RNA sequence: GGGAACGACUCGAGUAGAGUCGAAAAGAUAUGGACCCAUACUGCACGAGAAUGCGGUCGGAAACGACCGAUAUUCGAUGAGUGUUAUGGGUCCUAAGUCAAAACAGUUUGUCUUCGGACAAACUGACAUAGUGGUAACGUUCGCGUUACCACUAUGAAAAGAAACAACAACAACAAC
Reactivity to 2A3 in 0.01 (KOAc 150mM, MgCl2 10mM, bicine 150mM(pH8.5), 24C), signal-to-noise 8, nucleotides 027 to 126: g000a000u020a000u050g000g000a000c010c000c000a000u010a020c160u140g040c010a000c030g200a190g000a200a000u010g010c000g000g000u000c000g000g000a010a010a000c000g000a000c010c020g020a030u010a010u020u000c010g150a210u300g180a050g010u010g010u040u030a000u010g010g010g000u000c000c000u000a000a000g000u000c000a000a000a060a160c010a000g000u000u010u000g010u010c020u050u130c300g050g000a010c000a000a000a000c000u000g010a030
Reactivity to DMS in 0.01 (KOAc 150mM, MgCl2 10mM, bicine 150mM(pH8.5), 24C), signal-to-noise 9, nucleotides 027 to 126: g000a010u000a010u010g000g000a010c000c000c000a010u000a010c300u010g010c010a010c010g000a040g010a010a010u000g000c000g000g000u000c000g010g000a010a000a030c000g010a020c000c000g000a030u010a000u000u000c000g020a200u010g010a090g020u000g010u000u000a010u000g000g010g010u000c000c000u000a000a050g000u000c000a120a100a090a260c020a010g000u000u000u000g000u000c000u000u020c280g030g010a010c000a000a000a010c000u000g000a150